[RMDB]
RNA sequence: GGGAACGACUCGAGUAGAGUCGAAAAGCCUUCCGGAGAUCCUUCUCGAGAUCAUCCACUAACUUUCUUGCAUUGACCCACUGCUCGAGGACUCCUUCUCUUCCCGCUCGGGAUUUCUUCGUCUCGGAUAGCGUCGGGUUCGCCCGACGCAAAAGAAACAACAACAACAAC
Reactivity to 2A3 in 0.01 (KOAc 150mM, MgCl2 10mM, bicine 150mM(pH8.5), 24C), signal-to-noise 4, nucleotides 027 to 129: g020c010c000u050u060c000c030g000g000a040g010a000u060c010c000u080u100c090u070c090g130a120g000a050u020c030a110u010c000c010a060c070u100a150a090c040u030u120u120c020u070u200g020c050a100u010u130g060a060c000c000c000a020c040u020g000c000u000c000g010a030g020g010a050c020u040c000c000u020u000c020u010c000u010u020c000c010c000g000c030u050c020g020g010g020a010u030u050u020c050u030u050c050g020u010c000u010c000g070g040a080u070a070
Reactivity to DMS in 0.01 (KOAc 150mM, MgCl2 10mM, bicine 150mM(pH8.5), 24C), signal-to-noise 1, nucleotides 027 to 129: g070c090c040u040u060c000c000g020g000a120g030a010u000c020c020u000u050c120u040c000g040a080g000a060u030c060a220u010c030c100a000c080u100a120a180c160u000u000u000c040u030u010g020c120a080u000u000g010a000c000c000c000a120c130u000g040c000u010c050g030a050g000g000a150c180u010c000c110u030u050c000u010c050u000u010c000c000c030g100c130u000c040g000g020g000a090u000u000u000c070u030u060c190g010u010c100u020c000g010g070a100u000a060
The record gives the reactivity of an RNA of 170 nucleotides to 2A3 and DMS. The RNA was probed in 150 mM KOAc, 10 mM MgCl2 and 150 mM bicine (pH 8.5) at 24 C.